Structure probing data (2A3) for a 207-nucleotide construct. 2A3 adducts were read by reverse transcription with SuperScript II with manganese.
RNA sequence: GGGAACGACUCGAGUAGAGUCGAAAACCCAGCGCUUCGGCGCUGGGAAAAAAACCUUUGUGUAUAAGGACGUAUAGCGAGAUGACACACCCAUUGGGUGUGCAUCCGCUGCAAACUUAUACACUCUGGUAAAAAGUCCGGUGUUCGCACCGGACAACCUACUCAAUCUGUUCGCAGAUUGAGUAGGAAAAGAAACAACAACAACAAC
Reactivity to 2A3 in 0.01 (KOAc 150mM, MgCl2 10mM, bicine 150mM(pH8.5), 24C), signal-to-noise 2, nucleotides 027 to 156: c000c000c000a010g000c010g000c030u100u080c280g120g000c000g000c020u010g020g000g110a240a030a000a000a000a000a020c010c010u020u010u010g030u000g000u010a010u000a000a010g000g030a020c070g020u020a080u180a250g010c080g000a300g000a300u010g260a060c000a000c000a000c000c030c080a240u240u300g040g000g010u000g000u010g000c010a000u030c000c000g000c010u010g000c000a140a140a070c010u000u000a000u000a000c000a000c000u000c000u000g030g010u060a070a210a000a000a000g020u010c010c000g070g000u010g050u050u130c260g010c100a000c000c010g010g020a000c000a000a010